RNA sequence: GGGAACGACUCGAGUAGAGUCGAAAAGGUUAUUACCGGUCACUCCCACACCAUACGGUAAUAACCACCGAGAGGGAUGAUUAGGUGUGGCUACCAGUGCUAGCGUCAUUACCACCCCAUAGCUAGCACUGGAAGCGAAAGCGAUUAGUGGGGUGGACCUAUUACCUCAGUUCGCUGAGGUAAUAGGAAAAGAAACAACAACAACAAC
Reactivity to 2A3 in 0.01 (KOAc 150mM, MgCl2 10mM, bicine 150mM(pH8.5), 24C), signal-to-noise 4, nucleotides 027 to 156: g010g000u000u000a010u020u000a000c000c010g040g030u140c050a060c100u100c010c000c010a000c000a000c000c000a030u030a070c010g000g000u010a000a000u000a010a000c010c000a030c000c070g060a090g080a070g020g130g010a130u160g070a120u190u170a020g040g000u000g010u010g000g020c000u050a030c000c010a000g000u000g010c000u000a000g000c000g050u100c060a090u110u120a120c010c000a000c000c000c000c000a000u030a010g000c000u000a010g010c000a010c000u000g000g000a000a000g030c040g080a140a020a020g080c110g120a200u130u120a080g100u030g030g000g000g000u010g000g000a010